Source information:
This 207-nucleotide RNA was probed chemically with 2A3 and DMS. For 2A3, 967 sequencing reads were counted. The data come from the RNA Mapping Database (RMDB), library M2RFPK. DMS adducts were read by reverse transcription with MarathonRT. The RNA was probed in 150 mM KOAc, 10 mM MgCl2 and 150 mM bicine (pH 8.5) at 24 C.
[RMDB]
RNA sequence: GGGAACGACUCGAGUAGAGUCGAAAAUUGAUAUCUUCUAAAACCCGGUGCAUUCAUCAAUGCAGGUUAAGCCAAAGGGAUGUCCCGACCGGAGGCCGACAAUCCAGGGAACCGGAUGUCAUCACGUAAAACCGUCAGUUCUUCGGAACUGACGGAACGAAAAGAGCAAGUUCGCUUGCUCUUUUCGAAAAGAAACAACAACAACAAC
Reactivity to 2A3 in 0.01 (KOAc 150mM, MgCl2 10mM, bicine 150mM(pH8.5), 24C), signal-to-noise 2, nucleotides 027 to 156: u040u000g010a000u010a020u080c040u190u000c050u150a050a140a190a220c010c020c010g040g020u020g000c010a030u030u120c060a140u130c060a160a030u060g010c020a030g010g010u050u050a090a000g000c000c010a000a000a000g020g010g010a010u070g010u050c000c000c010g020a010c000c000g000g000a000g000g000c010c000g040a040c030a070a080u040c010c040a090g020g000g070a080a090c050c000g020g000a010u040g000u020c040a110u040c040a010c130g080u120a110a000a070a000c000c010g000u000c000a000g000u000u000c010u000u150c180g090g000a000a000c000u000g000a000c000g000g000a010a000
Reactivity to DMS in 0.01 (KOAc 150mM, MgCl2 10mM, bicine 150mM(pH8.5), 24C), signal-to-noise 1, nucleotides 027 to 156: u000u000g020a090u040a000u010c020u000u030c030u000a040a070a090a240c000c000c020g000g050u000g000c000a030u000u020c000a110u000c120a020a100u020g000c010a050g050g000u000u000a110a030g000c010c000a040a300a300g030g010g000a110u000g000u010c020c020c000g000a060c030c000g010g000a300g000g000c010c000g020a100c090a030a070u010c020c000a080g030g110g020a150a100c030c030g030g040a030u000g010u010c030a100u000c140a120c070g010u010a060a120a090a210c000c000g000u000c000a000g000u010u010c000u000u000c300g050g000a050a050c000u000g000a000c000g000g000a000a000